This 177-nucleotide RNA was probed chemically with DMS and 2A3.
The 2A3 profile rests on 2,702 reads.
For 2A3 the reverse transcriptase was SuperScript II with manganese.
In probing experiments dimethyl sulfate is read out at A N1 and C N3, which are open when not base-paired.
For DMS, 6,153 sequencing reads were counted.
Source: RMDB library VIROID, as collected in RNAgym.
The reactions ran in a buffer of 150 mM KOAc, 10 mM MgCl2 and 150 mM bicine (pH 8.5), at 24 C.
RNA sequence: GGGAACGACUCGAGUAGAGUCGAAAAGGGGGGAGCUUCGAACGGAGGGGACCAGUGGAUCCGUUGGAAGCGCUCCCUCCCGUUCCGUCCGAACCCACCUCCCCCGCAGGGUCGCCCAGGAAUGGCGCACAUAGGUAAGGUUCGCCUUACCUAUGUGAAAAGAAACAACAACAACAAC
Reactivity to DMS in 0.01 (KOAc 150mM, MgCl2 10mM, bicine 150mM(pH8.5), 24C), signal-to-noise 4, nucleotides 027 to 126: g010g000g010g000g010g010a040g010c040u000u000c010g000a010a010c000g010g010a030g010g020g010g000a130c100c100a080g020u010g010g000a130u010c000c000g020u010u000g000g010a020a030g020c070g020c070u000c000c000c000u000c010c000c000g000u000u000c010c020g010u010c040c030g030a080a130c030c010c030a260c070c010u000c010c010c010c010c020g010c140a080g010g000g010u000c020g000c040c000c080a120g010g010a080a080u010g000g000c070g000
Reactivity to 2A3 in 0.01 (KOAc 150mM, MgCl2 10mM, bicine 150mM(pH8.5), 24C), signal-to-noise 2, nucleotides 027 to 126: g010g000g000g000g010g000a000g000c000u030u000c020g070a010a000c010g000g000a010g030g050g020g030a040c030c030a060g080u180g100g060a070u030c030c010g000u010u060g130g010a030a010g050c030g050c030u040c010c000c020u020c000c000c000g020u050u000c010c010g040u050c030c030g050a100a070c000c010c010a060c010c020u020c000c000c020c000c000g040c010a050g010g040g020u020c010g030c020c020c010a020g040g080a160a080u150g030g000c020g000